[RMDB]
RNA sequence: GGGAACGACUCGAGUAGAGUCGAAAAAGCAGGUUACGACCUGCAAAUGCAGUGUUGAUAUGUCUGAUAUUCUUGGGUUGUGCAAAGUCAACCAGCAUCUCAGACGUAUCGGCCACUGUGUAUUGAAGUUUAUAAGCCUCUUCGGAGGCUUAUAAACAAAAGAAACAACAACAACAAC
Reactivity to 2A3 in 0.01 (KOAc 150mM, MgCl2 10mM, bicine 150mM(pH8.5), 24C), signal-to-noise 5, nucleotides 027 to 126: a000g010c010a010g010g040u060u140a100c170g070a020c050c000u000g000c010a030a010a020u130g000c000a000g000u000g000u030u020g010a000u010a010u020g000u010c010u000g000a010u000a000u050u030c030u110u160g180g010g010u050u020g010u040g100c120a100a080a110g110u080c000a010a000c000c000a010g020c000a000u000c000u000c020a000g000a000c000g000u000a000u000c010g010g010c030c010a030c010u010g000u010g030u020a090u040u140g070a100a020
Reactivity to DMS in 0.01 (KOAc 150mM, MgCl2 10mM, bicine 150mM(pH8.5), 24C), signal-to-noise 3, nucleotides 027 to 126: a130g000c010a000g000g000u000u010a090c220g010a080c000c000u000g020c010a020a050a020u000g000c000a000g010u000g020u000u000g010a010u010a000u000g020u000c000u000g000a020u000a050u000u010c020u010u020g050g030g000u010u010g010u020g000c180a110a100a230g010u020c010a010a010c000c000a030g000c130a020u000c020u000c000a000g010a020c010g030u000a010u000c000g010g000c100c070a010c020u000g010u000g000u020a050u010u020g000a140a120
Description
An RNA of 177 nucleotides, treated with 2A3 and DMS and read out base by base.